Chemical mapping of a 207-nucleotide RNA with 2A3. Values cover nucleotides 27 to 156. Conditions: 150 mM KOAc, 10 mM MgCl2 and 150 mM bicine (pH 8.5), 24 C. For 2A3, 566 sequencing reads were counted.
RNA sequence: GGGAACGACUCGAGUAGAGUCGAAAACAUCACUUUAAUGACAUUUGGCAGUCAUUUGAUUUAUUAGGUUUUAGAAAAAAUUUUCCUUUAAAUAUUUCAUCAUACUAUGCUAAUCCUAGUAAUAUUGCCAGCUGCAGCCUUGUACCUGUAUUAGUGGGAGUUAUAUUUGUUUCGACAAAUAUAACUCAAAAGAAACAACAACAACAAC
Reactivity to 2A3 in 0.01 (KOAc 150mM, MgCl2 10mM, bicine 150mM(pH8.5), 24C), signal-to-noise 2, nucleotides 027 to 156: c030a070u150c030a080c060u170u190u300a160a090u040g030a000c000a050u070u110u030g020g010c000a000g000u060c020a020u160u030u260g030a000u030u060u050a070u040u030a020g010g010u120u020u000u050a030g050a000a080a010a020a090a040u100u120u060u210c030c000u130u190u050a090a180a090u140a110u130u300u080c000a040u020c000a000u100a250c070u130a060u290g030c000u000a000a000u010c000c000u020a000g020u010a030a080u070a080u200u070g020c020c000a010g020c030u090g000c030a020g020c000c010u100u090g000u120a040c000c060u090g000u030a090u090u030a070g040u100g040g080